[RMDB]
RNA sequence: GGGAACGACUCGAGUAGAGUCGAAAAUGAUUCAGCUGCGGUAAUACCUUGCAAGCAGUCUUUGGACAGAAGGGAUCUAUUCAUACUGUACAAUACAUCCUGCACCCUGGUGCUGUUUACAACUCUCAGGUAUCAGUGAAUUCGUUCACUGAUACCUAAAAGAAACAACAACAACAAC
Reactivity to 2A3 in 0.01 (KOAc 150mM, MgCl2 10mM, bicine 150mM(pH8.5), 24C), signal-to-noise 3, nucleotides 027 to 126: u110g010a020u090u040c060a020g000c010u040g050c030g030g040u060a140a050u120a270c020c020u030u080g040c010a070a060g000c000a010g030u030c000u060u080u080g030g010a010c020a030g070a070a100g090g000g000a020u010c030u090a130u040u050c020a030u080a170c040u100g030u050a030c030a000a030u040a070c020a030u040c010c000u010g000c020a030c010c020c020u060g080g000u060g000c040u010g110u000u070u040a080c070a100a040c030u020c000u030c080
Reactivity to DMS in 0.01 (KOAc 150mM, MgCl2 10mM, bicine 150mM(pH8.5), 24C), signal-to-noise 5, nucleotides 027 to 126: u010g030a110u000u010c030a070g030c030u000g010c050g000g010u000a070a110u000a290c110c060u010u000g020c060a090a100g000c040a060g010u000c050u000u020u010g000g010a080c060a030g010a120a090g000g010g000a050u000c150u000a080u000u000c050a070u000a130c100u000g000u000a050c100a030a050u000a040c100a060u010c040c020u000g000c070a070c070c030c030u010g010g010u000g010c010u000g010u010u000u010a060c180a060a080c100u000c050u000c150
Chemical mapping of a 177-nucleotide RNA with 2A3 and DMS. Values cover nucleotides 27 to 126. Conditions: 150 mM KOAc, 10 mM MgCl2 and 150 mM bicine (pH 8.5), 24 C.